The record gives the reactivity of an RNA of 177 nucleotides to 2A3 and DMS. DMS adducts were read by reverse transcription with MarathonRT. For 2A3 the reverse transcriptase was SuperScript II with manganese.

RNA sequence: GGGAACGACUCGAGUAGAGUCGAAAACACAGAAUCUUCGGAUUCUGUGAAAGGAACAAAAACAUGCAAAAGUUCCAAAAAGCAUGAAGGACAAAAGUCCAAAAACACAUCGCUUCGGCGAUGUGAAGAAAUACGCAAAGUUCGCUUUGCGUAUUUCAAAAGAAACAACAACAACAAC
Reactivity to 2A3 in 0.01 (KOAc 150mM, MgCl2 10mM, bicine 150mM(pH8.5), 24C), signal-to-noise 3, nucleotides 027 to 126: c000a000c000a010g010a000a000u000c010u040u070c110g150g000a000u010u000c000u000g010u000g010a030a000a010g040g000a060a030c060a050a150a030a010a010c000a010u040g010c020a000a020a050a240g020u060u000c020c020a050a110a000a000a000g030c010a010u040g050a140a110g020g000a020c030a040a300a050a060g000u000c000c000a060a010a030a050a000c020a010c000a000u010c000g010c020u050u100c230g100g000c010g000a000u000g000u000g000a010a010
Reactivity to DMS in 0.01 (KOAc 150mM, MgCl2 10mM, bicine 150mM(pH8.5), 24C), signal-to-noise 3, nucleotides 027 to 126: c000a000c000a020g000a000a000u010c000u000u010c190g020g010a000u000u000c000u010g010u000g010a050a070a120g000g020a050a070c100a040a060a060a120a130c030a000u000g000c020a080a090a080a080g010u000u010c000c020a040a060a080a140a130g000c020a000u000g010a230a160g000g000a030c010a060a090a060a180g010u000c010c010a050a050a060a070a130c010a000c000a000u000c000g000c010u000u000c150g010g010c000g020a000u000g010u010g020a030a060
Overview:
The 2A3 profile rests on 4,510 reads. The RNA was probed in 150 mM KOAc, 10 mM MgCl2 and 150 mM bicine (pH 8.5) at 24 C. Reactivities are rounded to 0.1 and cut off at 0 and 3. It was measured as part of the RMDB library M2PK50. 2A3 is a SHAPE reagent: it acylates the 2'-hydroxyl of flexible nucleotides of all four kinds.